[RMDB]
RNA sequence: GGGAACGACUCGAGUAGAGUCGAAAACGCGACAACGACCGUGCGCUGAUCGCGGUGGGCAUCGCCGUGUUGGCGCUGCGCGCGCUGGUGUUGCCCUGGCUGCUGGCCCGCGCGGUGGGCGCCGAAGUACGCCCAUACAUUUCGAUGUAUGGGCGUAAAAAGAAACAACAACAACAAC
Reactivity to DMS in 0.01 (KOAc 150mM, MgCl2 10mM, bicine 150mM(pH8.5), 24C), signal-to-noise 3, nucleotides 027 to 126: c060g010c030g010a070c100a080a180c050g020a080c060c040g010u020g000c010g020c060u000g000a050u000c050g000c020g000g010u020g000g010g020c070a040u030c020g000c000c010g000u000g020u030u030g000g020c000g020c010u010g010c150g010c100g000c160g000c000u000g000g050u000g000u020u010g000c040c020c000u010g000g010c010u020g010c060u010g010g010c010c070c200g030c020g010c000g000g010u000g000g010g000c040g000c010c010g010a110a100g000
Reactivity to 2A3 in 0.01 (KOAc 150mM, MgCl2 10mM, bicine 150mM(pH8.5), 24C), signal-to-noise 6, nucleotides 027 to 126: c040g010c040g060a070c050a130a030c050g110a040c040c040g040u060g020c020g020c040u060g120a110u100c030g000c010g000g030u100g020g020g010c020a040u050c010g010c020c000g040u100g130u170u200g030g000c010g000c030u060g040c080g020c030g000c010g000c060u050g000g030u040g040u100u040g000c000c000c000u020g080g010c010u070g020c030u130g060g030c020c000c010g040c000g010c000g000g000u030g020g010g010c000g000c000c010g020a040a010g060